An RNA of 207 nucleotides, treated with DMS and read out base by base.
The RNA was probed in 150 mM KOAc, 10 mM MgCl2 and 150 mM bicine (pH 8.5) at 24 C.
Reactivities are given for positions 27 through 156.
[RMDB]
RNA sequence: GGGAACGACUCGAGUAGAGUCGAAAAAUUAGGGCAAUCCAGGGACACUCCCAUCACUUUUUCUCUUGGCUUUUAUACCAUCAGUGUCCGAAUCCCACAUCUGCCCUACACAGAAAGUUCUCACUGAAGUCUAGGCCCUGGAGAAAGGCUAAUAGAACCGUAUACGUAUCUUCGGAUACGUAUACGGAAAAGAAACAACAACAACAAC
Reactivity to DMS in 0.01 (KOAc 150mM, MgCl2 10mM, bicine 150mM(pH8.5), 24C), signal-to-noise 1, nucleotides 027 to 156: a170u010u010a000g030g020g080c030a100a180u000c070c060a100g030g000g030a080c050a070c030u000c010c010c030a130u000c040a050c020u000u000u010u010u020c070u010c020u000u020g010g120c030u000u010u030u030a160u020a020c040c010a040u000c020a000g080u010g000u000c000c040g020a130a150u000c010c010c040a150c080a160u000c070u000g020c010c040c000u000a030c080a070c110a090g000a110a070a090g000u000u000c040u000c000a230c130u010g010a070a060g010u000c060u000a110g070g000c000c010c040u000g000g000a070g000a070a020a020g000g000c010u000a000a040u000a030g080a030a190